[RMDB]
RNA sequence: GGGAACGACUCGAGUAGAGUCGAAAAUCUGAAUCCUUCGGGAUUCAGAAAAGGCGGAGGGCCCGCCGGAACCGCUAUACAGGUGGAGGUUCCAAACGACCCAAAGGACUAACUUCGGUUAGUCCAACUCCUAAUUGAUGUUCGCAUCAAUUAGGAGAAAAGAAACAACAACAACAAC
Reactivity to 2A3 in 0.01 (KOAc 150mM, MgCl2 10mM, bicine 150mM(pH8.5), 24C), signal-to-noise 3, nucleotides 027 to 126: u000c000u000g000a000a000u000c000c010u000u050c110g130g010g000a010u010u000c000a000g000a000a030a000a030g010g000c000g010g010a060g100g000g000c080c000c010g010c000c000g010g000a000a000c010c000g000c050u070a040u080a220c120a110g230g080u060g020g100a060g010g000u000u000c000c000a000a030a030c120g290a300c010c010c010a030a020a050g010g010a000c000u000a010a000c010u030u110c280g120g000u010u000a000g000u000c000c010a000a000
Reactivity to DMS in 0.01 (KOAc 150mM, MgCl2 10mM, bicine 150mM(pH8.5), 24C), signal-to-noise 2, nucleotides 027 to 126: u000c000u010g000a020a000u000c000c000u000u020c190g030g010g000a000u000u000c000a000g000a020a050a080a170g000g010c000g040g000a100g010g000g000c060c000c000g030c000c020g010g010a010a000c000c000g000c030u000a080u000a120c300a110g000g000u000g030g030a050g010g010u010u000c000c000a060a110a050c130g000a060c000c000c000a110a090a100g020g000a020c000u000a000a000c000u000u020c210g020g000u000u000a000g000u000c000c000a010a050
An RNA of 177 nucleotides, treated with 2A3 and DMS and read out base by base. The RNA was probed in 150 mM KOAc, 10 mM MgCl2 and 150 mM bicine (pH 8.5) at 24 C.